[RMDB]
RNA sequence: GGGAACGACUCGAGUAGAGUCGAAAAGGAUAUGGGAAUGGCAUGCCUAAACCAUAUCCGACUGGCGUAGCGCGCGUACCUAUACCAUAGCGCGCGAAGGUAUAGGAUAAGGCAUGCCAAGCCAGGAGGGAAGCCUGGUCUUCGGAUUAGGCUUCCCAAAAGAAACAACAACAACAAC
Reactivity to DMS in 0.01 (KOAc 150mM, MgCl2 10mM, bicine 150mM(pH8.5), 24C), signal-to-noise 7, nucleotides 027 to 126: g000g010a050u010a010u010g000g000g010a130a100u010g000g000c010a020u010g000c000c010u000a080a140a140c100c070a060u010a000u000c000c000g000a040c030u010g000g010c030g000u010a150g000c040g020c020g010c020g020u030a080c040c030u000a030u010a050c050c020a060u010a130g010c020g020c040g000c010g000a070a080g000g000u000a020u010a040g000g000a080u010a090a060g000g000c000a020u000g010c000c000a040a070g000c050c040a030g000g000a300
Reactivity to 2A3 in 0.01 (KOAc 150mM, MgCl2 10mM, bicine 150mM(pH8.5), 24C), signal-to-noise 8, nucleotides 027 to 126: g020g000a010u010a010u020g030g000g040a080a150u060g010g010c060a030u070g040c010c010u090a140a070a050c030c000a030u030a000u030c000c000g000a000c010u020g020g030c020g050u070a010g020c020g010c000g000c010g060u110a120c010c020u050a030u030a070c020c020a070u070a070g030c040g010c020g020c010g030a020a010g020g000u030a010u040a030g020g010a050u060a110a040g020g000c010a010u020g000c000c000a000a000g040c000c010a030g040g040a040